[RMDB]
RNA sequence: GGGAACGACUCGAGUAGAGUCGAAAAGAAAGCGCCAAAAGGCGGCGGGCAAAAGCCCGCGCGGCGCCGGCGCCCGCGGCUCGGUUCGCCGAGCCAAAAGAAACAACAACAACAAC
Reactivity to DMS in 0.01 (KOAc 150mM, MgCl2 10mM, bicine 150mM(pH8.5), 24C), signal-to-noise 2, nucleotides 027 to 095: g000a080a150a120g000c030g000c000c000a040a110a170a120g030g030c020g020g010c010g010g000g010c010a110a110a140a150g000c000c020c000g010c030g000c050g000g040c010g000c150c010g020g000c190g020c030c010c060g060c300g000g040c050u010c000g000g040u020u040c140g070c000c010g010a040g000c030c030a000